Chemical mapping of a 177-nucleotide RNA with 2A3 and DMS. Conditions: 150 mM KOAc, 10 mM MgCl2 and 150 mM bicine (pH 8.5), 24 C. High DMS reactivity at an A or C suggests that its Watson-Crick edge is free. For 2A3 the reverse transcriptase was SuperScript II with manganese.
RNA sequence: GGGAACGACUCGAGUAGAGUCGAAAAAAUCAAUCAAAUAGCACAGCUAAUCUAAAUUGAAGGAGGUAGGCUCCUUGAUUGAUGUAAAUAAUUUCCAUUAUAUGAAAAUAGGAUUGGCUUCACCUGAGGACAAGCAUUUAUUCGUAAAUGCUUGUCCAAAAGAAACAACAACAACAAC
Reactivity to 2A3 in 0.01 (KOAc 150mM, MgCl2 10mM, bicine 150mM(pH8.5), 24C), signal-to-noise 4, nucleotides 027 to 126: a000a000u020c020a020a000u010c030a000a000a070u090a070g040c080a040c090a150g020c020u010a070a020u000c010u090a120a220a200u260u290g080a100a040g060g030a000g090g070u190a100g130g010c020u000c000c000u020u010g000a000u000u020g000a010u010g030u130a020a110a100u150a030a080u090u080u010c010c000a020u140u120a170u090a080u210g120a060a080a060a030u110a060g030g020a050u000u060g010g030c000u040u060c020a170c060c030u050g060a020
Reactivity to DMS in 0.01 (KOAc 150mM, MgCl2 10mM, bicine 150mM(pH8.5), 24C), signal-to-noise 2, nucleotides 027 to 126: a080a010u000c020a010a000u010c010a060a030a070u020a050g000c100a200c110a050g000c010u000a030a050u000c020u020a000a130a130u030u040g000a040a010g010g020a010g000g040u000a160g020g000c000u000c040c000u000u000g020a010u000u000g000a020u000g000u010a050a010a060u000a110a100u010u000u000c040c010a120u040u050a130u000a020u040g020a130a080a070a030u030a110g000g030a030u000u000g000g000c010u000u030c120a020c090c040u000g000a140